[RMDB]
RNA sequence: GGGAACGACUCGAGUAGAGUCGAAAAGUAUAGAAGCAUGAGACCGCAUGCGAUAUACGAUGAAUCACGGUCGAAUCCGUUGUGCGAAAGCACUUCGGUAAUGCAUAUCGGUAGUCAGAUCAGCCCGGAUCAGCUACCGUAAUUAGUACGGGCAAGAAGCGUAUUAUCGUUUCGACGAUAAUACGCUAAAAGAAACAACAACAACAAC
Reactivity to DMS in 0.01 (KOAc 150mM, MgCl2 10mM, bicine 150mM(pH8.5), 24C), signal-to-noise 1, nucleotides 027 to 156: g030u010a120u010a060g000a130a230g010c020a010u000g000a240g020a060c020c030g010c030a100u000g000c040g000a260u000a030u000a120c120g010a220u000g010a190a040u000c080a010c000g010g010u000c010g020a170a140u000c000c010g020u000u000g010u030g000c040g000a200a060a190g010c000a010c000u000u010c010g030g000u000a020a050u010g010c050a140u010a100u000c010g010g000u000a040g020u010c000a200g030a030u000c000a050g090c040c030c020g030g000a230u000c010a120g000c020u000a010c030c010g040u000a030a000u000u000a100g030u000a010c000g020g000g020c000a150a160g000a110
Reactivity to 2A3 in 0.01 (KOAc 150mM, MgCl2 10mM, bicine 150mM(pH8.5), 24C), signal-to-noise 3, nucleotides 027 to 156: g020u040a010u040a100g070a190a040g010c010a000u020g000a020g040a100c000c010g010c050a040u030g030c020g000a010u010a000u020a080c120g030a090u140g110a060a060u120c120a080c060g000g030u030c020g000a010a050u050c000c000g010u000u020g000u010g020c030g020a060a010a020g030c000a000c000u000u000c010g000g000u060a090a010u130g000c080a080u090a010u150c000g000g000u010a000g020u080c110a040g000a010u000c020a000g010c000c000c000g000g000a000u000c030a000g000c000u010a000c000c000g010u010a000a000u000u050a030g160u030a030c000g000g000g020c020a020a040g170a010